[RMDB]
RNA sequence: GGGAACGACUCGAGUAGAGUCGAAAAGAAAAGCGCAGCCAACCUCUCUCCCUGUCCUGGGAAAUUAGGUCGGGGAUCAAGAGAGGUGAAAUGUAUUUGGUUAUUCUCUGAUGCGCGAAGAGAAGAACCCUAAUAAUAAGUUCGCUUAUUAUUAGGGAAAAGAAACAACAACAACAAC
Reactivity to DMS in 0.01 (KOAc 150mM, MgCl2 10mM, bicine 150mM(pH8.5), 24C), signal-to-noise 9, nucleotides 027 to 126: g000a090a060a090a170g000c010g020c010a100g010c080c060a130a020c000c010u000c000u000c000u000c000c000c000u000g000u000c000c000u010g010g000g000a080a090a140u020u010a010g010g010u010c000g010g000g000g000a110u020c230a150a010g000a010g000a010g000g000u010g000a020a080a070u020g010u010a060u020u020u010g010g010u000u000a090u010u000c000u000c000u000g000a140u010g010c000g010c000g000a150a030g000a020g000a010a030g010a100a190
Reactivity to 2A3 in 0.01 (KOAc 150mM, MgCl2 10mM, bicine 150mM(pH8.5), 24C), signal-to-noise 5, nucleotides 027 to 126: g120a010a070a010a020g020c020g000c010a010g050c020c040a020a010c030c000u000c000u010c000u000c000c000c000u020g010u000c000c010u030g020g040g160a110a140a080u210u130a030g000g000u000c000g000g000g000g010a030u110c130a050a010g010a000g000a000g000g010u010g000a000a010a000u230g040u130a170u090u100u110g050g010u080u040a040u080u010c010u000c010u040g110a110u100g010c000g000c010g020a030a020g010a010g000a080a010g010a000a020
The record gives the reactivity of an RNA of 177 nucleotides to DMS and 2A3.
For 2A3 the reverse transcriptase was SuperScript II with manganese.
Source: RMDB library OK1LIB, as collected in RNAgym.
As a SHAPE reagent, 2A3 marks flexible, mostly unpaired nucleotides at the ribose 2'-OH.
The DMS profile rests on 39,311 reads.
For 2A3, 5,079 sequencing reads were counted.